RNA sequence: GGGAACGACUCGAGUAGAGUCGAAAAGUUUUGAGACAGUCUUGUUCUGUUGCCCAGGCUGGAGUGUAAUGAUGCAGUCAUAGCUCACUGCAGCUUCUAACUCCUGGGCUCAAGUAAUGCUCCUGCCGGUGGCAACAGAUUUCGAUCUGUUGCCACCAAAAGAAACAACAACAACAAC
Reactivity to 2A3 in 0.01 (KOAc 150mM, MgCl2 10mM, bicine 150mM(pH8.5), 24C), signal-to-noise 1, nucleotides 027 to 126: g020u040u020u200u150g100a050g070a110c040a050g040u140c020u170u170g040u040u010c070u040g040u050u090g030c000c000c000a030g040g000c060u000g030g030a090g020u080g030u070a070a120u080g070a040u090g000c000a000g060u090c040a180u240a140g050c040u050c020a010c010u000g050c020a090g070c000u080u090c020u080a040a020c040u020c040c000u000g030g000g020c000u000c010a000a000g010u030a030a080u060g010c000u000c000c000u040g100c000c090
Reactivity to DMS in 0.01 (KOAc 150mM, MgCl2 10mM, bicine 150mM(pH8.5), 24C), signal-to-noise 1, nucleotides 027 to 126: g000u000u000u010u010g000a190g010a110c060a060g010u010c100u000u000g000u030u010c020u000g020u000u000g020c010c000c010a070g020g000c270u010g000g000a030g020u010g010u010a040a080u000g000a090u000g020c020a070g020u000c220a140u020a110g020c100u010c060a040c020u000g010c010a040g030c020u000u010c120u000a100a070c170u010c040c010u010g020g000g000c000u000c080a010a040g010u010a050a030u000g000c050u000c020c010u000g000c080c070